An RNA of 177 nucleotides, treated with DMS and read out base by base.
RNA sequence: GGGAACGACUCGAGUAGAGUCGAAAAGAUAUGGAGGUCCGCCCUAGGUGAUAAAGAGCGAGGAUCAUACGGGAUCGGAAACGAUCUUAUGGGAGCUCUUUAUCACCUAGGGCGACCUCCUAAGUCACUACGCACUAUAGUUCGCUAUAGUGCGUAGAAAAGAAACAACAACAACAAC
Reactivity to DMS in 0.01 (KOAc 150mM, MgCl2 10mM, bicine 150mM(pH8.5), 24C), signal-to-noise 2, nucleotides 027 to 126: g000a050u010a300u010g010g000a020g010g000u000c100c090g060c010c010c010u000a000g040g030u000g010a040u000a000a010a020g000a020g030c000g000a100g020g000a040u010c020a000u000a040c300g000g000g010a010u000c020g000g000a090a110a180c030g020a010u000c000u000u000a030u010g010g010g010a080g010c000u000c000u000u000u000a000u000c020a000c000c000u000a000g010g020g020c000g010a000c000c010u000c000c000u000a000a020g000u000c030a300
It was measured as part of the RMDB library TTRINS. For DMS, 2,188 sequencing reads were counted.